[RMDB]
RNA sequence: GGGAACGACUCGAGUAGAGUCGAAAAGAUAUGGAUUCCAUGGAGAUGCAGGUCGGAAACGACCUUUAUCGUUGAAAUGGAUCCUAAGUCAAAGAUUCAGGUGUAACUUCGGUUACACCUGAAUCAACUGCUUAUAUUUGUUCGCAAAUAUAAGCAGAAAAGAAACAACAACAACAAC
Reactivity to DMS in 0.01 (KOAc 150mM, MgCl2 10mM, bicine 150mM(pH8.5), 24C), signal-to-noise 6, nucleotides 027 to 126: g000a020u000a100u010g000g000a020u000u000c000c000a010u000g000g000a060g010a010u000g010c300a020g000g010u000c010g020g000a020a020a050c000g000a010c000c000u000u000u000a010u000c000g010u000u010g000a090a210a020u000g000g000a060u000c000c000u000a020a100g000u000c010a100a110a140g010a020u000u000c000a000g000g010u000g000u000a000a000c000u000u020c230g030g000u000u000a000c000a000c000c000u000g000a000a000u000c000a040a140
Reactivity to 2A3 in 0.01 (KOAc 150mM, MgCl2 10mM, bicine 150mM(pH8.5), 24C), signal-to-noise 4, nucleotides 027 to 126: g010a010u030a030u070g040g020a040u300u150c000c010a010u010g010g000a050g000a010u010g010c040a010g010g030u000c000g000g000a020a000a020c010g000a000c000c010u000u020u010a010u010c000g060u090u010g010a010a010a000u000g000g000a000u000c000c000u000a020a000g030u010c060a180a060a160g000a010u000u000c000a010g060g010u000g000u000a000a000c010u060u230c300g070g000u020u010a010c000a000c010c000u000g000a000a000u010c000a000a000
An RNA of 177 nucleotides, treated with DMS and 2A3 and read out base by base.